Overview:
Structure probing data (2A3 and DMS) for a 177-nucleotide construct. Conditions: 150 mM KOAc, 10 mM MgCl2 and 150 mM bicine (pH 8.5), 24 C. It was measured as part of the RMDB library OK2TST. For DMS, 609 sequencing reads were counted.
[RMDB]
RNA sequence: GGGAACGACUCGAGUAGAGUCGAAAAUGAAGUAAUAGUCAAUCUUAUUCCAUAAGCAGAACGGUCAAUAUUUUGAGAUAAAACUUUUCUUUGACGCAUUGCAAUAAGAGUAGUACUAUCACUACUAGCAUACCUAGGAGUUCGCUCCUAGGUAUGCAAAAGAAACAACAACAACAAC
Reactivity to 2A3 in 0.01 (KOAc 150mM, MgCl2 10mM, bicine 150mM(pH8.5), 24C), signal-to-noise 2, nucleotides 027 to 126: u110g000a000a020g040u060a010a040u010a040g020u000c020a010a160u000c020u000u040a000u080u000c080c020a050u000a080a130g050c020a020g010a150a010c060g050g000u010c020a100a050u100a190u070u240u140u190g130a130g030a030u230a060a150a080a090c010u040u070u000u080c000u030u050u050g060a040c020g000c040a010u000u100g050c030a020a020u090a030a020g010a010g030u190a000g000u040a030c000u010a000u050c070a000c020u100a010c010u010a040
Reactivity to DMS in 0.01 (KOAc 150mM, MgCl2 10mM, bicine 150mM(pH8.5), 24C), signal-to-noise 1, nucleotides 027 to 126: u000g010a080a060g000u010a050a000u000a050g000u000c020a180a070u010c040u000u000a030u000u000c200c020a180u010a030a200g000c040a080g000a060a070c150g020g020u000c010a070a120u000a090u000u000u000u000g010a080g040a090u010a000a080a100a080c070u000u030u010u000c060u000u000u010g000a150c010g000c090a120u000u010g010c190a020a040u000a030a020g000a030g010u000a050g040u010a020c060u000a030u000c080a000c000u010a100c080u010a160